[RMDB]
RNA sequence: GGGAACGACUCGAGUAGAGUCGAAAAGAGUCCAAGAGGUGGUCGAGGGUCUCAUGUCUGUCAAAUGAUCAGGUCGUCAAUAUUGCAAAUGUGAUGUCAACGGUGUCUACUAACGCUCUGACUGUGGCAAAGCAUUUAACUUCGGUUAAAUGCUUUGAAAAGAAACAACAACAACAAC
Reactivity to 2A3 in 0.01 (KOAc 150mM, MgCl2 10mM, bicine 150mM(pH8.5), 24C), signal-to-noise 4, nucleotides 027 to 126: g040a020g040u000c020c010a020a020g040a050g070g050u080g000g030u070c050g030a100g020g020g020u020c020u000c020a050u100g040u040c040u020g080u050c030a040a060a180u120g020a080u070c050a030g010g070u030c020g030u030c030a060a070u130a070u140u130g030c030a020a090a150u150g030u050g040a060u040g050u050c030a080a040c060g000g040u020g030u000c020u030a090c010u040a130a010c010g000c020u010c020u020g070a070c030u060g030u050g100g000
Reactivity to DMS in 0.01 (KOAc 150mM, MgCl2 10mM, bicine 150mM(pH8.5), 24C), signal-to-noise 9, nucleotides 027 to 126: g010a110g010u010c030c040a110a110g000a110g010g010u000g000g020u000c040g000a130g010g000g010u000c050u000c060a050u000g010u000c040u000g020u010c080a050a090a120u000g000a060u000c080a070g010g010u000c070g010u000c050a040a080u010a090u000u000g010c090a040a060a080u000g010u000g000a060u000g000u000c030a040a090c130g010g010u000g000u000c050u010a070c100u010a070a090c120g010c030u000c030u000g000a080c060u000g020u010g010g010

Chemical mapping of a 177-nucleotide RNA with 2A3 and DMS. In probing experiments dimethyl sulfate is read out at A N1 and C N3, which are open when not base-paired. The data come from the RNA Mapping Database (RMDB), library OK2TRN.